The record gives the reactivity of an RNA of 207 nucleotides to DMS and 2A3. Source: RMDB library OK3TST, as collected in RNAgym. The RNA was probed in 150 mM KOAc, 10 mM MgCl2 and 150 mM bicine (pH 8.5) at 24 C. For DMS, 1,551 sequencing reads were counted. 2A3 adducts were read by reverse transcription with SuperScript II with manganese. For DMS the reverse transcriptase was MarathonRT.
RNA sequence: GGGAACGACUCGAGUAGAGUCGAAAAUGCGCACGCCGGUAAAGCCAAUCAUUUUUAAUACACGAUUAGCCGAAGAGGUAAUUCUAGGGGCCAUGGAUUUAACUUGCAAGAUCACACAAUCACCGACAAUUUCACAUUCAAGAUCGAGGCAUUGAGCCAGAAAACACGAGUUCGCUCGUGUUUUCUGAAAAGAAACAACAACAACAAC
Reactivity to DMS in 0.01 (KOAc 150mM, MgCl2 10mM, bicine 150mM(pH8.5), 24C), signal-to-noise 1, nucleotides 027 to 156: u010g020c040g030c020a060c080g000c080c070g040g030u010a050a130a090g000c000c010a060a090u040c000a110u030u000u010u010u080a100a280u000a180c110a080c070g050a040u000u000a120g000c040c060g010a110a160g000a060g050g020u010a020a120u000u000c040u010a070g000g020g030g000c050c040a100u000g010g000a090u000u020u010a080a090c060u010u000g000c080a040a090g000a060u010c000a020c100a010c070a100a070u000c040a140c040c040g030a100c050a040a080u010u000u000c030a060c070a110u000u020c080a040a080g010a090u010c020g000a180g000g010c030a080u000u000g010a120g010c110
Reactivity to 2A3 in 0.01 (KOAc 150mM, MgCl2 10mM, bicine 150mM(pH8.5), 24C), signal-to-noise 2, nucleotides 027 to 156: u140g000c030g000c030a020c030g000c030c010g080g010u010a100a020a000g000c040c000a020a040u000c010a060u050u030u050u120u280a180a110u230a070c120a030c080g070a080u060u040a050g000c000c030g000a030a000g030a020g020g030u030a060a020u080u080c060u110a040g000g000g010g030c000c050a050u060g030g000a000u090u040u110a080a050c030u040u080g020c030a060a030g010a110u070c000a010c000a010c000a110a040u090c020a060c080c040g060a010c030a040a020u080u110u020c100a100c030a070u110u040c060a080a010g030a050u080c020g030a050g010g000c010a020u050u120g030a020g000c010